RNA sequence: GGGAACGACUCGAGUAGAGUCGAAAAGAUAUGGAUCAAUUCAACAGCCCACGGAGAUCGGAAACGAUCUUUGGGACAUGAAUGUCCUAAGUCACGACGUAUUAUCCACUUCGGUGGAUAAUACGAACAAGCAUGAUUACUUCGGUAAUCAUGCUUGAAAAGAAACAACAACAACAAC
Reactivity to 2A3 in 0.01 (KOAc 150mM, MgCl2 10mM, bicine 150mM(pH8.5), 24C), signal-to-noise 3, nucleotides 027 to 126: g010a030u100a050u160g030g000a060u130c150a100a110u170u020c000a020a060c020a180g090c000c010c000a040c140g140g010a020g000a020u020c010g000g020a080a070a020c020g010a010u020c010u030u010u040g010g010g010a010c050a110u090g030a020a020u030g010u000c010c000u050a140a070g060u040c050a010c210g210a020c010g060u000a010u000u000a000u000c010c000a010c010u070u090c300g130g000u000g000g000a000u000a000a000u000a000c000g000a000a030
Reactivity to DMS in 0.01 (KOAc 150mM, MgCl2 10mM, bicine 150mM(pH8.5), 24C), signal-to-noise 4, nucleotides 027 to 126: g000a040u010a300u000g000g000a010u010c080a120a020u010u010c000a030a100c210a210g000c010c010c000a100c300g010g000a010g010a020u010c010g010g000a090a090a160c000g010a000u000c000u000u000u000g000g010g020a020c050a170u020g000a010a010u000g000u000c000c000u010a030a100g000u000c030a090c150g010a240c000g000u000a000u000u000a010u000c000c010a010c010u000u020c160g040g020u000g000g000a000u000a000a000u000a000c000g010a060a100
Notes:
This 177-nucleotide RNA was probed chemically with 2A3 and DMS. It was measured as part of the RMDB library TTRDEL. The RNA was probed in 150 mM KOAc, 10 mM MgCl2 and 150 mM bicine (pH 8.5) at 24 C. For DMS the reverse transcriptase was MarathonRT.